[RMDB]
This 177-nucleotide RNA was probed chemically with DMS and 2A3. For 2A3, 1,120 sequencing reads were counted.
RNA sequence: GGGAACGACUCGAGUAGAGUCGAAAAGUAUGAUUUGCGGCAUCAGUGUAGUUAAUGGUUCACGAAGAUGUGGCAAAACUAUGAUGUCCUCCAGUGCGAACCCACAAAAGUCACGCAAACAUUGCGGAUCGGUGGAUGAGUUCGCUCAUCCACCGAUAAAAGAAACAACAACAACAAC
Reactivity to DMS in 0.01 (KOAc 150mM, MgCl2 10mM, bicine 150mM(pH8.5), 24C), signal-to-noise 1, nucleotides 027 to 126: g020u000a010u000g020a100u000u010u000g020c080g000g000c040a010u000c000a190g030u010g000u040a020g010u000u000a080a140u020g010g000u000u000c040a050c010g030a080a100g010a080u000g010u000g010g000c010a010a080a010a010c070u000a020u000g010a010u000g010u020c000c000u040c180c050a090g000u000g010c030g000a020a090c050c020c050a030c220a040a080a040a100g020u010c140a100c020g040c010a000a140a080c210a130u010u000g020c010g020g000
Reactivity to 2A3 in 0.01 (KOAc 150mM, MgCl2 10mM, bicine 150mM(pH8.5), 24C), signal-to-noise 2, nucleotides 027 to 126: g030u020a000u130g100a210u080u040u080g070c080g030g000c020a000u000c000a000g110u060g040u200a010g010u060u120a140a060u240g180g000u110u150c000a000c050g050a110a210g100a070u170g020u000g020g000c000a000a030a150a030c030u040a030u110g030a020u000g020u020c020c010u000c010c010a020g010u010g030c020g050a060a040c000c020c030a010c020a010a160a000a000g090u070c030a070c130g000c010a090a210a140c040a180u040u190g010c030g000g070
In probing experiments dimethyl sulfate is read out at A N1 and C N3, which are open when not base-paired.